[RMDB]
RNA sequence: GGGAACGACUCGAGUAGAGUCGAAAAAGUGUUGUGUGAUCUUGCGCGAUAAAUGCUGACGUGAAAACGUUGCGUAUUGCUACAACACUUGGUUAGCUAUUUAGCUUUACUAAUCAAGACGCCGUCGGAUCUUAUAAUUUUUCGAAAUUAUAAGAUCAAAAGAAACAACAACAACAAC
Reactivity to 2A3 in 0.01 (KOAc 150mM, MgCl2 10mM, bicine 150mM(pH8.5), 24C), signal-to-noise 9, nucleotides 027 to 126: a000g030u020g010u010u010g010u010g060u030g080a240u040c010u030u050g000c000g000c010g050a050u050a110a160a050u230g030c090u100g030a030c020g040u060g090a050a040a020a040c030g000u010u010g000c000g000u010a040u030u120g040c020u010a000c000a020a000c000a000c000u000u000g000g000u020u020a010g000c040u030a110u230u180u140a090g020c010u080u080u060a040c020u040a020a070u060c030a030a030g070a070c080g050c170c020g050u060c040g060
Reactivity to DMS in 0.01 (KOAc 150mM, MgCl2 10mM, bicine 150mM(pH8.5), 24C), signal-to-noise 9, nucleotides 027 to 126: a040g010u000g020u000u000g000u000g020u000g010a130u010c030u010u000g000c300g000c000g010a040u010a040a070a060u010g010c040u030g030a010c010g010u000g000a130a070a110a020c050g010u000u000g010c010g020u000a010u010u000g000c010u000a040c030a020a010c010a030c010u000u000g000g000u000u000a010g000c090u000a120u010u010u010a060g010c090u000u000u000a070c020u000a040a090u010c030a030a040g000a130c080g020c100c100g010u010c150g010
Source: RMDB libraries RFM100 and RFMREP, as collected in RNAgym.
Chemical mapping of a 177-nucleotide RNA with 2A3 and DMS.
The reactions ran in a buffer of 150 mM KOAc, 10 mM MgCl2 and 150 mM bicine (pH 8.5), at 24 C.
Reactivities are given for positions 27 through 126.